[RMDB]
RNA sequence: GGGAACGACUCGAGUAGAGUCGAAAACGGAGGAUUCGUCCUCCGAAUCGAUUGCCUGAUCGUAAAACAGGAGACGGCCGUGGCCGCGACCACGUAAAAAAGCGUAUUACUAUAGGUUCGCCUAUAGAUUUGGUAGUAUUUUCGAAUACUACCAAAUAAAAGAAACAACAACAACAAC
Reactivity to DMS in 0.01 (KOAc 150mM, MgCl2 10mM, bicine 150mM(pH8.5), 24C), signal-to-noise 4, nucleotides 027 to 126: c010g010g000a020g010g000a030u000u020c210g010u000c000c000u000c000c000g000a040a030u010c010g000a010u000u010g000c010c000u000g000a010u000c000g000u000a040a010a000a020c010a010g000g000a020g010a070c030g000g010c050c000g020u000g000g000c160c060g000c000g020a070c000c000a010c000g000u010a000a000a010a010a010a010g010c010g010u030a110u010u010a290c010u000a010u000a010g000g010u000u010c300g020c000c010u000a010u000a000g000
Reactivity to 2A3 in 0.01 (KOAc 150mM, MgCl2 10mM, bicine 150mM(pH8.5), 24C), signal-to-noise 3, nucleotides 027 to 126: c010g000g000a000g010g000a000u030u050c180g060u010c050c000u000c010c000g000a000a010u090c000g000a010u010u020g010c000c010u000g010a010u010c040g100u200a000a020a020a000c010a000g020g010a020g020a020c020g030g000c030c000g000u000g000g020c080c010g000c000g010a020c000c010a000c040g040u110a000a010a010a000a020a000g010c000g010u010a080u090u120a030c000u000a000u000a000g030g020u020u040c200g050c050c000u000a010u010a000g060

Structure probing data (DMS and 2A3) for a 177-nucleotide construct. DMS adducts were read by reverse transcription with MarathonRT.